[RMDB]
RNA sequence: GGGAACGACUCGAGUAGAGUCGAAAAGAUAUGGAACUGCCUGGGAGGACCGGGCAGUGCGAUGAAAGAUCUCGGAAACGAGAUCUGGAGCACGAUGCGGUCCAUCGAUCAGGCAGUUCCUAAGUCAGAUAUUCUAAAUCUUCGGAUUUAGAAUAUCAAAAGAAACAACAACAACAAC
Reactivity to 2A3 in 0.01 (KOAc 150mM, MgCl2 10mM, bicine 150mM(pH8.5), 24C), signal-to-noise 2, nucleotides 027 to 126: g020a010u060a040u120g040g000a000a000c000u020g040c020c000u000g000g060g020a020g000g020a010c000c000g120g150g020c060a010g000u000g000c000g300a300u040g020a020a000a000g000a000u000c010u000c000g020g000a080a070a050c010g020a020g000a010u000c000u000g010g000a000g030c000a000c030g140a110u300g250c000g040g000u010c020c010a160u300c020g050a100u100c010a020g000g000c000a000g010u000u000c000c000u000a000a000g000u010c020a010
Reactivity to DMS in 0.01 (KOAc 150mM, MgCl2 10mM, bicine 150mM(pH8.5), 24C), signal-to-noise 5, nucleotides 027 to 126: g010a030u010a300u000g010g000a020a020c000u000g010c010c000u000g000g000g010a040g030g010a020c000c010g020g010g030c210a090g020u000g010c020g010a140u020g030a200a160a020g000a000u000c000u000c000g010g000a050a060a120c000g010a010g000a010u000c000u000g000g000a080g010c000a010c000g000a230u020g000c010g010g000u000c010c000a300u000c190g000a030u020c010a000g010g010c000a010g000u000u000c000c000u000a000a070g010u010c040a130